[RMDB]
RNA sequence: GGGAACGACUCGAGUAGAGUCGAAAAGAAGAACCACAUUGUACCAGAGUAAAGCAGUUGAAGCCGUUUUGAUCCAUUUGCCGUCAGGUACAGAGACACUCAUUCACGAUCACGGCUCGUCCGUAGGCCACUCAUGACCGUUCGCGGUCAUGAGUGGAAAAGAAACAACAACAACAAC
Reactivity to 2A3 in 0.01 (KOAc 150mM, MgCl2 10mM, bicine 150mM(pH8.5), 24C), signal-to-noise 2, nucleotides 027 to 126: g280a050a000g050a080a000c050c040a050c020a100u080u230g050u020a030c020c040a010g040a000g020u160a060a110a060g080c130a100g010u090u010g250a020a000g060c020c040g040u070u080u060u150g080a000u020c050c070a260u060u000u060g020c000c050g060u090c020a020g000g060u030a090c020a030g060a000g010a030c020a000c190u060c040a070u170u070c010a040c170g020a070u100c030a010c040g020g020c060u050c040g060u070c000c020g030u050a070g090g000
Reactivity to DMS in 0.01 (KOAc 150mM, MgCl2 10mM, bicine 150mM(pH8.5), 24C), signal-to-noise 1, nucleotides 027 to 126: g000a030a020g010a060a210c030c050a030c120a180u080u000g000u000a070c120c010a020g000a130g070u000a130a160a010g000c060a050g000u000u000g110a130a180g000c000c110g170u000u000u040u000g060a130u000c050c080a040u000u000u000g000c000c020g000u000c120a080g000g050u000a000c060a110g000a180g000a050c100a090c070u000c050a050u000u000c040a130c060g100a100u010c020a000c020g000g000c120u000c160g060u040c060c050g080u000a080g060g000
Description:
Chemical mapping of a 177-nucleotide RNA with 2A3 and DMS. Reactivities are given for positions 27 through 126. For 2A3 the reverse transcriptase was SuperScript II with manganese. For 2A3, 769 sequencing reads were counted. Values are in units of 0.01, from 0 to 300, in steps of 10. The data come from the RNA Mapping Database (RMDB), library OK1LIB.